[RMDB]
Notes
Chemical mapping of a 170-nucleotide RNA with 2A3 and DMS. The reactions ran in a buffer of 150 mM KOAc, 10 mM MgCl2 and 150 mM bicine (pH 8.5), at 24 C. The 2A3 profile rests on 147,315 reads. DMS adducts were read by reverse transcription with MarathonRT.
RNA sequence: GGGAACGACUCGAGUAGAGUCGAAAAGGUUCACACCUCCAGUCGGCGGGCCGGCUACUCUUCUUUCCCUUCUCUCGUCUUCCUCGGUCAACCUCUUAAGUUCCUCUUCUUCUUCCUUGCUGAGGUUUAGCUGAUAUCUUCGGAUAUCAGAAAAGAAACAACAACAACAAC
Reactivity to 2A3 in 0.01 (KOAc 150mM, MgCl2 10mM, bicine 150mM(pH8.5), 24C), signal-to-noise 9, nucleotides 027 to 129: g040g000u120u110c050a040c020a030c080c010u020c020c010a050g110u060c020g050g040c010g010g020g030c020c010g020g000c000u050a070c020u030c000u070u020c000u020u050u040c010c010c000u070u020c030u000c010u010c010g060u010c010u100u040c010c000u010c020g020g010u040c020a050a070c010c000u020c000u080u100a100a040g020u040u020c000c000u020c000u040u010c000u040u010c000u030u020c020c000u030u060g020c030u030g030a050g040g030u050u040u060a030g010
Reactivity to DMS in 0.01 (KOAc 150mM, MgCl2 10mM, bicine 150mM(pH8.5), 24C), signal-to-noise 9, nucleotides 027 to 129: g030g030u000u030c090a090c140a110c000c000u010c020c040a110g030u000c070g000g000c060g000g010g010c010c030g000g000c000u000a030c040u000c040u030u000c010u020u010u020c010c010c030u010u030c000u000c010u020c060g000u040c050u020u010c020c010u010c060g000g000u010c050a060a120c000c000u020c050u020u030a090a110g010u000u000c010c020u000c010u010u000c030u000u000c040u000u000c020c030u000u000g000c000u000g020a030g010g010u010u010u010a090g030